[RMDB]
RNA sequence: GGGAACGACUCGAGUAGAGUCGAAAAUACUUGUCCUGAACACCUCAUCCACCCUGUUCAAAUGGACUACAGGGUCUAUCUCGAGUCUGAGGGCUCAGUUGGAGAGAGAAUUGUGCAGGGGGUUAGUGCCUUUGAACGAUAUUACCCCAAGAAGCAGACGCUUACAAAUGUUCGCAUUUGUAAGCGUAAAAGAAACAACAACAACAAC
Reactivity to 2A3 in 0.01 (KOAc 150mM, MgCl2 10mM, bicine 150mM(pH8.5), 24C), signal-to-noise 2, nucleotides 027 to 156: u140a020c020u110u140g000u050c010c010u000g090a020a060c060a030c010c040u040c010a170u030c060c000a030c040c000c020u010g000u080u020c000a100a130a300u160g090g010a020c020u000a020c110a040g000g010g000u000c010u060a080u050c000u000c040g020a020g020u000c020u030g070a120g090g040g000c010u020c060a030g000u070u080g040g000a030g000a040g020a010g040a050a120u210u120g020u030g000c060a060g020g000g010g030g010u010u040a060g010u080g100c000c000u060u040u160g070a130a000c040g020a000u020a110u170u150a090c030c010c010c000a020a010g040a000a000g000c050a000g020
Reactivity to DMS in 0.01 (KOAc 150mM, MgCl2 10mM, bicine 150mM(pH8.5), 24C), signal-to-noise 1, nucleotides 027 to 156: u000a050c070u010u010g020u010c000c020u000g000a090a040c060a170c040c000u030c050a210u010c070c070a130c000c010c000u000g040u000u000c050a020a140a130u010g010g010a080c030u000a180c010a040g000g010g050u000c050u010a060u000c020u000c030g030a140g010u010c030u000g010a100g040g040g030c020u020c070a070g040u000u000g020g000a090g020a040g020a110g010a060a110u000u000g000u020g020c030a130g000g030g000g030g040u000u000a130g000u000g020c020c030u000u000u030g010a060a100c060g000a130u010a030u000u010a150c000c000c020c000a040a200g020a120a130g020c020a120g030

The record gives the reactivity of an RNA of 207 nucleotides to 2A3 and DMS. DMS adducts were read by reverse transcription with MarathonRT.